[RMDB]
RNA sequence: GGGAACGACUCGAGUAGAGUCGAAAACUGAACUGUUUGCAAUGAUCUCAAUCAGACAACUUACUCCGAUUCCAUCAUUAAUUUUCCUUGGUGGAACUUCAAUCGUCAUGCUCUUCAUUGGUAACGAUCCGCUAUGAUGAUUCGUCAUCAUAGCGGAAAAAGAAACAACAACAACAAC
Reactivity to DMS in 0.01 (KOAc 150mM, MgCl2 10mM, bicine 150mM(pH8.5), 24C), signal-to-noise 2, nucleotides 027 to 126: c060u010g000a060a110c130u000g010u010u000u000g010c060a030a050u000g010a110u000c050u010c070a060a090u000c040a070g010a070c070a050a050c160u010u000a150c100u000c040c110g020a150u010u010c020c020a020u000c020a050u000u010a050a090u000u000u010u010c140c070u030u020g020g000u000g010g020a000a050c050u010u010c130a060a080u000c130g010u000c020a060u010g010c090u000c050u000u000c040a070u000u010g000g030u000a050a090c090g000a090
Reactivity to 2A3 in 0.01 (KOAc 150mM, MgCl2 10mM, bicine 150mM(pH8.5), 24C), signal-to-noise 3, nucleotides 027 to 126: c030u060g040a080a020c070u110g050u120u030u140g010c070a090a090u140g010a100u030c060u020c040a060a080u110c010a030g050a070c020a080a020c050u140u160a060c030u060c060c010g130a200u040u000c010c000a020u030c010a000u040u210a180a190u100u130u150u150c000c000u000u020g030g020u000g010g000a020a010c020u100u080c040a050a090u060c020g020u000c020a060u040g030c020u000c000u070u070c040a080u000u140g110g020u090a020a040c010g000a040